[RMDB]
RNA sequence: GGGAACGACUCGAGUAGAGUCGAAAAAGCCGAGGCUGAGAGCGUUGCUAAGAGCUUCGGUAAGUGUUUUCCAUACAUGCAGAUAACCGGCCGACAGCCGGGUACACCUCUCCAAAAGUCUACUCGGCACGUCGUGGCAGUUCGCUGCCACGACGUGAAAAGAAACAACAACAACAAC
Reactivity to 2A3 in 0.01 (KOAc 150mM, MgCl2 10mM, bicine 150mM(pH8.5), 24C), signal-to-noise 1, nucleotides 027 to 126: a010g010c000c000g020a010g010g000c000u070g030a130g000a000g170c280g300u210u300g070c020u070a050a170g000a000g050c000u020u000c010g020g000u010a070a070g020u020g030u050u000u090u000c000c000a060u120a130c120a150u220g030c010a090g000a050u110a200a080c000c040g000g030c010c060g200a010c000a000g000c000c020g060g000g000u090a020c030a010c000c000u110c020u000c040c000a050a050a050a050g050u000c000u000a070c000u000c000g000g030
An RNA of 177 nucleotides, treated with 2A3 and read out base by base. The RNA was probed in 150 mM KOAc, 10 mM MgCl2 and 150 mM bicine (pH 8.5) at 24 C. For 2A3, 409 sequencing reads were counted.